Chemical mapping of a 177-nucleotide RNA with DMS and 2A3. 2A3 adducts were read by reverse transcription with SuperScript II with manganese. DMS adducts were read by reverse transcription with MarathonRT. For 2A3, 1,255 sequencing reads were counted. The data come from the RNA Mapping Database (RMDB), library OK2TST.
[RMDB]
RNA sequence: GGGAACGACUCGAGUAGAGUCGAAAAUCGUUGAGGUCGGGCAGCUCCAGCUCACGCAAAAUCUCGCUGUAGACGCCCUGGAGCAGGUCUUCUUUGGUGGGAAAGUAGUGGUAGAGGCUCUUGGGGCAAACGUCUAAAUCUUCGGAUUUAGACGUUUAAAAGAAACAACAACAACAAC
Reactivity to DMS in 0.01 (KOAc 150mM, MgCl2 10mM, bicine 150mM(pH8.5), 24C), signal-to-noise 3, nucleotides 027 to 126: u010c050g020u000u010g000a090g010g020u000c070g030g010g020c070a120g030c010u010c030c000a060g010c030u000c020a090c030g000c060a020a070a180a170u000c030u000c020g000c030u000g010u000a060g000a050c200g010c170c060c010u000g000g010a100g020c080a040g010g010u000c030u000u010c020u000u000u010g010g010u010g000g000g000a040a020a070g000u000a030g000u000g000g030u010a090g000a100g010g000c040u010c070u000u010g020g010g010g010c070
Reactivity to 2A3 in 0.01 (KOAc 150mM, MgCl2 10mM, bicine 150mM(pH8.5), 24C), signal-to-noise 1, nucleotides 027 to 126: u080c000g030u000u080g050a030g020g060u070c020g040g050g020c030a020g000c040u030c020c020a010g030c000u020c060a030c010g050c010a000a010a100a130u030c030u020c000g060c010u040g030u060a020g010a010c010g030c030c020c020u020g050g010a070g110c000a010g000g000u000c010u050u030c000u090u150u090g040g020u040g000g020g050a050a050a010g020u030a000g010u050g070g050u100a070g000a040g100g050c030u020c050u150u150g000g000g000g000c010